[RMDB]
RNA sequence: GGGAACGACUCGAGUAGAGUCGAAAAUUAAGACUACUAAAACCCAAACCAAUUACCUGCCUCCCUUAGAUUUUUUAGCCUGUGAUCUAGAUGGAGAACCCCCCCAGCACAUGGGUUAAUCUGAAAAGUCUAAGAGUAAGUUCGCUUACUCUUAGACAAAAGAAACAACAACAACAAC
Reactivity to DMS in 0.01 (KOAc 150mM, MgCl2 10mM, bicine 150mM(pH8.5), 24C), signal-to-noise 2, nucleotides 027 to 126: u000u000a070a100g000a110c040u000a150c110u000a060a040a100a160c040c000c000a030a140a090c120c070a090a080u010u000a030c040c050u000g000c100c010u010c010c000c120u000u000a010g010a010u000u000u000u030u000u000a080g010c030c030u000g030u000g000a030u000c040u000a030g020a090u000g010g000a010g010a150a260c060c000c010c020c000c000c030a070g000c100a070c030a060u040g000g000g010u010u000a030a080u050c100u010g000a030a100a080a140

The record gives the reactivity of an RNA of 177 nucleotides to DMS. The reactions ran in a buffer of 150 mM KOAc, 10 mM MgCl2 and 150 mM bicine (pH 8.5), at 24 C. Values cover nucleotides 27 to 126.